This 177-nucleotide RNA was probed chemically with DMS and 2A3. For 2A3 the reverse transcriptase was SuperScript II with manganese. DMS adducts were read by reverse transcription with MarathonRT. It was measured as part of the RMDB library OK1LIB. For DMS, 1,197 sequencing reads were counted. The 2A3 profile rests on 754 reads.

[RMDB]
RNA sequence: GGGAACGACUCGAGUAGAGUCGAAAACUGUCUUACAGCCUGAAAGAAAAGGAGAUCAAGGAAACAGGUAGACUUUUCGCUAAAAUGACUUACAAAAUGAGGGCAUGCCAAGUGAUCGCUGAAAAUCAUGGGAGCAGUAGUUCGCUACUGCUCCCAUAAAAGAAACAACAACAACAAC
Reactivity to DMS in 0.01 (KOAc 150mM, MgCl2 10mM, bicine 150mM(pH8.5), 24C), signal-to-noise 1, nucleotides 027 to 126: c030u000g070u000c120u030u010a070c070a080g020c070c020u000g000a030a070a040g000a000a040a050a010g020g000a070g000a100u000c010a110a210g120g030a050a090a020c200a040g020g010u010a050g000a090c000u050u000u060u000c060g030c060u040a020a030a000a010u000g070a090c060u100u030a060c160a020a110a030a050u080g000a120g030g000g000c000a080u050g020c000c080a120a020g000u060g000a100u000c000g040c060u000g000a030a020a020a090u000c140
Reactivity to 2A3 in 0.01 (KOAc 150mM, MgCl2 10mM, bicine 150mM(pH8.5), 24C), signal-to-noise 2, nucleotides 027 to 126: c010u020g020u080c140u090u120a050c020a030g000c000c000u020g000a050a160a050g100a020a090a060a070g050g070a100g000a180u100c090a040a000g180g000a090a020a000c010a000g000g020u060a000g040a050c010u090u000u000u000c030g000c050u100a250a050a000a030u100g060a190c000u010u280a130c110a030a130a000a280u180g080a100g040g010g000c040a040u140g040c000c000a000a070g070u040g010a020u000c000g000c070u040g000a060a070a100a000u090c060